[RMDB]
RNA sequence: GGGAACGACUCGAGUAGAGUCGAAAAUACACCAUGUCUAGUCUAGGCGAGCUAGACACUGCCAUGAUCGAGGAUCGUACUACUAGCAGGUACCGAUGCAGCUAGCUAGCGAUGCACAGAGACGUCGCUGGGCCUGGUUAUUCGUAACCAGGCCCAGAAAAGAAACAACAACAACAAC
Reactivity to DMS in 0.01 (KOAc 150mM, MgCl2 10mM, bicine 150mM(pH8.5), 24C), signal-to-noise 1, nucleotides 027 to 126: u030a150c300a260c030c020a130u010g010u000c020u000a030g000u020c050u000a150g010g020c070g020a090g020c000u000a050g040a030c020a080c110u000g010c090c050a020u000g050a040u000c080g020a230g020g000a060u000c030g020u000a090c000u000a050c060u000a130g000c110a150g070g020u000a090c130c090g040a030u000g020c090a120g020c060u020a030g000c100u000a080g020c080g010a080u010g000c020a120c130a080g020a220g000a060c020g000u000c070g040
Reactivity to 2A3 in 0.01 (KOAc 150mM, MgCl2 10mM, bicine 150mM(pH8.5), 24C), signal-to-noise 1, nucleotides 027 to 126: u150a050c070a050c020c010a050u060g020u000c010u040a020g000u000c050u050a050g020g100c050g030a050g070c000u000a030g030a010c010a010c010u010g010c000c010a100u100g050a100u110c110g100a130g160g010a100u020c030g000u040a030c010u000a010c000u060a040g100c090a050g040g020u030a070c000c050g040a060u190g000c030a010g010c010u100a010g020c200u010a000g000c000g030a020u020g100c050a060c010a100g080a020g050a110c010g000u000c000g050
Overview
This 177-nucleotide RNA was probed chemically with DMS and 2A3. DMS adducts were read by reverse transcription with MarathonRT. It was measured as part of the RMDB library OK2TST. For DMS, 584 sequencing reads were counted. Reactivities are rounded to 0.1 and cut off at 0 and 3.